Source: RMDB library OK2TST, as collected in RNAgym. The record gives the reactivity of an RNA of 177 nucleotides to DMS and 2A3. High DMS reactivity at an A or C suggests that its Watson-Crick edge is free. The RNA was probed in 150 mM KOAc, 10 mM MgCl2 and 150 mM bicine (pH 8.5) at 24 C.

RNA sequence: GGGAACGACUCGAGUAGAGUCGAAAAGUCUUCGGCACCAAAUGUUUCACGUGUCCAUGUGAAGAGAUCACCAAACAGGCUUUGUGUGAGCAACGAGGCUGUUUAUUUCACCUAGGUGCAGGUGGGCACCCAGUCAACGAUUCGUCGUUGACUGGGUAAAAGAAACAACAACAACAAC
Reactivity to DMS in 0.01 (KOAc 150mM, MgCl2 10mM, bicine 150mM(pH8.5), 24C), signal-to-noise 3, nucleotides 027 to 126: g010u000c020u010u020c070g020g020c010a050c020c010a120a090a090u040g030u000u000u000c010a080c100g010u010g010u010c120c090a060u000g010u010g010a050a090g010a070g010a040u010c060a120c110c100a000a020a040c050a070g010g000c010u000u000u020g000u000g050u010g020a100g010c200a100a030c070g000a000g010g040c010u000g000u000u000u010a150u020u000u000c060a030c060c050u000a110g000g000u000g000c020a110g010g010u000g020g000g000c160
Reactivity to 2A3 in 0.01 (KOAc 150mM, MgCl2 10mM, bicine 150mM(pH8.5), 24C), signal-to-noise 3, nucleotides 027 to 126: g030u010c000u040u070c070g050g000c020a000c000c040a090a060a150u140g060u040u060u030c060a040c080g070u060g070u040c080c050a070u120g030u040g080a050a030g040a020g010a070u120c060a030c150c000a000a020a000c020a050g190g040c020u000u070u160g040u050g000u050g110a180g030c030a040a000c020g010a000g020g060c030u020g000u030u090u050a130u040u130u080c020a060c030c020u020a080g060g000u030g030c040a020g090g020u030g010g000g000c020